[RMDB]
RNA sequence: GGGAACGACUCGAGUAGAGUCGAAAAAGAAAUAGCGAUUCUCGAAGGAGUUGAGACCUUCGAGGAUUGCUAAGCAAAGAUGCAGAACUAUCAAUGAACGACUUUGCUCAUCUUUGUAUACAAAAAAGAAUUAUAUCGUCUUCGGACGAUAUAAUUCAAAAGAAACAACAACAACAAC
Reactivity to DMS in 0.01 (KOAc 150mM, MgCl2 10mM, bicine 150mM(pH8.5), 24C), signal-to-noise 2, nucleotides 027 to 126: a090g010a100a100a110u000a000g000c010g000a020u000u000c000u020c000g020a020a000g010g000a080g030u000u010g000a230g010a040c010c000u000u000c000g010a000g000g000a000u000u000g000c000u000a010a140g010c010a000a010a000g010a010u000g000c190a030g000a040a070c090u000a080u010c050a130a170u000g000a110a060c220g000a050c060u000u000u020g000c010u000c030a020u000c000u000u000u000g000u000a120u000a080c100a000a050a030a030a070a060
Reactivity to 2A3 in 0.01 (KOAc 150mM, MgCl2 10mM, bicine 150mM(pH8.5), 24C), signal-to-noise 2, nucleotides 027 to 126: a010g090a000a040a030u050a010g010c010g000a000u000u000c000u000c000g010a000a000g010g050a030g030u140u110g200a080g060a130c000c000u000u020c010g000a010g000g000a000u000u000g000c000u000a020a020g020c000a000a000a000g000a010u030g010c070a020g020a070a070c050u070a080u220c040a120a280u300g100a080a060c080g100a040c090u110u120u110g020c010u010c000a010u000c000u040u000u010g040u020a110u040a130c070a020a150a010a040a030a010